The record gives the reactivity of an RNA of 207 nucleotides to 2A3. The RNA was probed in 150 mM KOAc, 10 mM MgCl2 and 150 mM bicine (pH 8.5) at 24 C. 2A3 adducts were read by reverse transcription with SuperScript II with manganese. For 2A3, 1,050 sequencing reads were counted.
RNA sequence: GGGAACGACUCGAGUAGAGUCGAAAAGGGACGCCUUUAGACGAAGAGGCUAGGUGGUAUUCCGGUGUGGGAUACUUGGUAAUAUGUAACGCUAAUUGCAUAAGAUUGUAGGACGGAAUUUACAGUCAAAACGGUCCUGCGUUCGCGCAGGACCGAACUCUCAUUAUGGCUUCGGCCAUAAUGAGAGAAAAGAAACAACAACAACAAC
Reactivity to 2A3 in 0.01 (KOAc 150mM, MgCl2 10mM, bicine 150mM(pH8.5), 24C), signal-to-noise 2, nucleotides 027 to 156: g020g000g010a010c050g020c000c050u050u080u170a080g040a130c010g060a110a040g010a000g010g030c050u050a020g020g040u070g000g000u040a030u060u000c000c040g010g130u130g010u050g020g000g010a030u030a030c010u030u090g010g030u060a050a000u030a130u170g070u030a050a050c020g000c170u070a090a060u030u050g010c030a020u000a050a100g000a030u050u050g000u050a010g000g130a010c040g020g060a010a010u140u080u010a080c030a000g030u040c020a020a020a100a100c000g000g000u030c000c010u000g000c000g000u000u070c250g000c000g000c130a000g010g000a000c000c000g000a000a000